[RMDB]
RNA sequence: GGGAACGACUCGAGUAGAGUCGAAAAGAUAUGGAUGCUACCAACAGCCUGCCGGUCGGAAACGACCGCAGGACAUGGGGCAUCCUAAGUCAAAACACACACAUCAAGUUCGCUUGAUGUGUGUGAAUCACUACAUGGCGUUCGCGCCAUGUAGUGAAAAAGAAACAACAACAACAAC
Reactivity to DMS in 0.01 (KOAc 150mM, MgCl2 10mM, bicine 150mM(pH8.5), 24C), signal-to-noise 2, nucleotides 027 to 126: g020a030u000a240u000g000g020a000u000g000c010u000a130c010c000a040a070c300a180g010c000c000u010g010c090c100g020g010u000c010g010g000a040a060a080c010g020a000c000c000g000c010a000g000g000a040c030a120u000g010g010g000g020c000a000u010c000c000u000a010a030g020u000c020a150a080a110a190c000a000c000a020c000a000c000a010u020c000a010a010g000u010u010c260g040c000u000u000g000a000u000g010u010g000u000g000u000g000a020a070
Reactivity to 2A3 in 0.01 (KOAc 150mM, MgCl2 10mM, bicine 150mM(pH8.5), 24C), signal-to-noise 2, nucleotides 027 to 126: g020a030u060a020u130g010g000a010u010g000c010u280a300c000c010a050a070c050a160g030c000c010u070g190c200c170g000g020u000c000g000g000a030a040a000c000g020a010c010c000g010c000a000g010g000a000c010a030u030g020g000g000g070c000a000u000c000c000u000a020a010g010u010c030a080a030a210a000c010a010c000a010c000a000c010a010u010c000a000a030g010u080u140c200g120c250u020u000g000a020u000g000u010g000u000g010u000g010a010a000